[RMDB]
RNA sequence: GGGAACGACUCGAGUAGAGUCGAAAAUGCUGAGGUUCUUCCCUCCCGCGCUGAGUUGAUUCUUCUUGUUCUUGAGGGCCUUCCUUCGUCGGUGAUCCUGCCUCUCCCUGUCGGUGAAUCCUCCCCUAAACACCAUAGUUCGCUAUGGUGAAAAGAAACAACAACAACAAC
Reactivity to DMS in 0.01 (KOAc 150mM, MgCl2 10mM, bicine 150mM(pH8.5), 24C), signal-to-noise 9, nucleotides 027 to 129: u050g000c040u030g000a000g000g010u000u000c050u000u010c020c040c000u000c020c000c040g000c160g000c050u000g020a150g030u010u000g000a120u000u000c020u000u000c070u020u020g030u000u000c040u000u020g030a160g010g010g010c030c040u000u000c030c030u020u030c070g030u000c020g000g020u020g010a070u030c050c010u000g000c000c030u030c030u010c010c020c020u030g010u010c060g000g000u000g020a080a070u020c030c020u010c000c000c020c000u030a040a100a150
Reactivity to 2A3 in 0.01 (KOAc 150mM, MgCl2 10mM, bicine 150mM(pH8.5), 24C), signal-to-noise 9, nucleotides 027 to 129: u140g010c030u070g010a060g040g020u090u050c010u050u050c020c000c010u030c010c000c010g030c020g020c060u090g030a030g070u070u060g100a180u080u010c000u050u020c010u050u110g060u100u030c020u030u070g030a080g010g010g020c010c010u050u060c020c010u040u060c030g080u010c020g030g050u060g020a060u040c000c000u030g040c010c010u010c010u030c000c000c000u030g060u070c030g030g020u040g040a010a030u030c000c000u030c000c000c000c000u040a060a070a010